[RMDB]
RNA sequence: GGGAACGACUCGAGUAGAGUCGAAAAUCUUCUAUGAUCCUAUUACUGGAGGAGGAUCUAGUGCACUAAACAUCAAUGAAAAAGAUACUGUUGAUUAUACAGGAAAGAUUGUCUUCUCUGGUGAAAAGAUUAAUGGAGUCUUCGGACUCCAUUAAUCAAAAGAAACAACAACAACAAC
Reactivity to 2A3 in 0.01 (KOAc 150mM, MgCl2 10mM, bicine 150mM(pH8.5), 24C), signal-to-noise 2, nucleotides 027 to 126: u010c000u200u000c070u090a170u190g050a100u090c020c000u030a070u190u080a030c010u000g000g010a000g020g000a000g060g000a010u010c000u010a040g070u130g100c090a030c160u150a090a140a040c070a060u040c000a010a070u130g230a130a070a060a050a020g130a070u140a100c070u070g030u030u010g050a200u060u130a040u040a100c050a010g040g010a010a050a030g010a010u000u060g040u090c010u020u010c000u010c000u010g020g000u040g010a050a070a010a000
Reactivity to DMS in 0.01 (KOAc 150mM, MgCl2 10mM, bicine 150mM(pH8.5), 24C), signal-to-noise 2, nucleotides 027 to 126: u010c070u000u010c080u000a080u040g010a070u000c010c000u010a100u000u010a020c010u000g000g000a020g010g030a030g020g000a010u000c000u000a090g010u000g010c140a290c100u010a040a090a080c120a040u000c030a040a030u020g020a120a080a080a130a090g010a160u000a110c110u010g030u000u020g010a070u000u000a070u000a080c080a030g000g000a140a180a070g000a040u010u010g020u030c010u000u000c030u000c000u010g000g020u000g000a080a120a090a130